[RMDB]
RNA sequence: GGGAACGACUCGAGUAGAGUCGAAAAACGCGCUUCACCCGCACGGUGCGCAGCUGGCCAUCGUGAUGGCUGCCGUUCUGCGCGGCGCCUGCUGCCUGCAGUCGCGUCCUGCGAUGCAUCGCAUUGACAUGAGACGAUGGUUCGCCAUCGUCUCAUGAAAAGAAACAACAACAACAAC
Reactivity to DMS in 0.01 (KOAc 150mM, MgCl2 10mM, bicine 150mM(pH8.5), 24C), signal-to-noise 3, nucleotides 027 to 126: a140c070g000c040g000c050u010u000c070a090c100c000c050g000c050a050c100g000g020u000g000c050g010c040a100g010c130u020g010g000c010c030a030u000c090g000u000g020a090u000g000g000c020u000g020c100c070g020u000u000c090u010g000c080g010c020g010g000c040g010c030c030u000g010c070u000g000c070c050u000g000c040a010g020u000c040g010c020g020u010c060c040u000g000c010g000a040u010g020c060a100u000c100g000c030a110u000u000g010a220
Reactivity to 2A3 in 0.01 (KOAc 150mM, MgCl2 10mM, bicine 150mM(pH8.5), 24C), signal-to-noise 3, nucleotides 027 to 126: a000c020g020c000g010c040u050u060c030a040c020c040c020g040c010a020c040g050g120u080g000c060g010c010a000g080c070u140g110g000c010c010a060u070c110g100u130g120a080u110g040g000c060u130g010c020c020g020u070u060c040u160g050c040g000c000g030g020c010g000c000c020u040g030c020u020g050c020c020u010g010c010a060g050u180c010g030c010g050u100c020c040u010g010c020g020a010u050g010c060a170u130c050g000c020a080u020u080g060a040